[RMDB]
RNA sequence: GGGAACGACUCGAGUAGAGUCGAAAAUUUGUUCCAUUGGUCUAUUUGCACAUUCUUGUGCCAGCACCUUACUGUUUUUAUUAUUAUGGCUUUAUAGAAUGUCUUAGUAGCUCCUUUGCACUUAUUUUUCAAAGCUGGUUUAAUCAUUUAUGGGGCAAUCCAUUAAUCACUUCGGUGAUUAAUGGAUAAAAGAAACAACAACAACAAC
Reactivity to DMS in 0.01 (KOAc 150mM, MgCl2 10mM, bicine 150mM(pH8.5), 24C), signal-to-noise 2, nucleotides 027 to 156: u000u000u000g010u000u000c060c020a110u000u010g010g040u000c010u000a030u000u000u010g010c140a020c030a030u000u010c030u020u030g020u000g030c010c040a100g000c050a070c040c100u020u000a100c050u010g000u010u000u010u010u030a040u040u020a090u010u000a160u010g000g010c000u010u020u010a080u000a090g010a050a020u000g020u000c040u010u000a050g040u000a040g030c040u000c020c010u000u010u010g030c070a090c060u000u000a090u010u000u000u000u020c050a060a080a140g020c010u000g010g010u000u000u010a040a130u000c040a090u010u000u000a070u010g020g030g060g040c090a120
Reactivity to 2A3 in 0.01 (KOAc 150mM, MgCl2 10mM, bicine 150mM(pH8.5), 24C), signal-to-noise 2, nucleotides 027 to 156: u040u000u080g020u050u000c010c020a000u010u030g030g000u080c050u010a040u030u070u050g030c060a020c010a040u050u050c050u090u130g060u060g040c020c010a030g020c010a070c040c010u080u140a060c040u100g130u150u130u180u030u020a060u170u010a010u060u050a060u110g020g000c010u130u110u260a120u070a070g020a040a040u010g020u010c010u030u070a070g010u050a010g020c020u120c000c020u060u020u040g010c010a030c030u060u070a130u070u160u020u110u140c030a080a050a100g020c030u030g000g080u070u140u080a040a010u080c040a020u110u090u200a110u140g000g010g050g020c010a020